[RMDB]
RNA sequence: GGGAACGACUCGAGUAGAGUCGAAAACCUGCGUCGGAAUGGCACUUCCGAAAAUGGGCUGUAGCGCAGCGUGACCAUGCUGUGCGAGGACGACCUAACGUCCUCUCUAUGAGCCGACCGGCUCCCUAAUUAAACUUAAAUUCGUUUAAGUUUAAUUAAAAGAAACAACAACAACAAC
Reactivity to DMS in 0.01 (KOAc 150mM, MgCl2 10mM, bicine 150mM(pH8.5), 24C), signal-to-noise 9, nucleotides 027 to 126: c020c000u000g020c190g010u010c010g000g010a040a040u010g010g010c100a090c130u000u000c010c010g010a030a040a100a100u020g010g010g010c050u010g010u010a080g010c100g020c000a010g010c010g010u010g010a150c230c160a070u010g010c000u000g010u000g000c050g000a010g000g000a010c000g010a180c190c150u030a110a190c020g010u000c000c000u000c000u020c070u010a060u020g000a050g010c000c010g010a110c130c090g000g010c040u000c000c100c030u000
Reactivity to 2A3 in 0.01 (KOAc 150mM, MgCl2 10mM, bicine 150mM(pH8.5), 24C), signal-to-noise 9, nucleotides 027 to 126: c000c000u030g030c050g070u030c010g000g060a090a100u080g120g010c050a030c070u080u040c020c010g040a090a040a020a090u180g030g010g000c050u070g080u170a030g010c000g000c020a010g000c020g050u080g070a090c060c040a050u110g000c000u010g010u030g010c020g000a000g000g000a000c010g060a110c020c110u110a170a050c010g000u000c010c000u000c000u000c000u020a130u160g090a020g020c010c010g030a060c030c040g010g000c000u020c020c000c000u010